[RMDB]
RNA sequence: GGGAACGACUCGAGUAGAGUCGAAAAAACACUGUGUAGGUUAGGUGGGAGGCUUUGAAGUGUGGACGCCAGUCUGCAUGGAGCCGACCUUGAAAUACCACCCUUUAAUGAAGAAAAACAAAGCCAACUAUUCUUGGAAGUUCGCUUCCAAGAAUAGAAAAGAAACAACAACAACAAC
Reactivity to 2A3 in 0.01 (KOAc 150mM, MgCl2 10mM, bicine 150mM(pH8.5), 24C), signal-to-noise 2, nucleotides 027 to 126: a000a000c140a020c040u160g010u030g050u150a060g050g030u000u090a020g070g000u010g060g030g000a050g010g000c000u290u150u100g060a080a020g000u010g020u020g010g010a010c030g080c150c030a020g030u010c000u000g000c020a010u010g030g000a010g000c010c000g060a080c000c020u000u080g040a020a020a020u070a010c000c030a030c020c000c000u010u140u090a200a170u190g080a040a130g090a050a080a000a020a000c060a070a070a020g080c040c010a020a050
Reactivity to DMS in 0.01 (KOAc 150mM, MgCl2 10mM, bicine 150mM(pH8.5), 24C), signal-to-noise 3, nucleotides 027 to 126: a050a040c070a060c030u010g030u030g010u000a030g030g020u000u000a080g010g010u000g000g000g010a300g010g010c020u000u010u010g000a120a100g000u000g020u000g000g010a030c010g020c130c160a150g010u000c020u000g000c000a010u000g010g000a020g030c000c010g000a070c070c050u000u000g010a020a050a070u000a080c010c010a050c020c010c070u000u000u000a070a090u000g020a050a080g010a050a050a040a060a070c100a050a080a110g000c070c070a070a150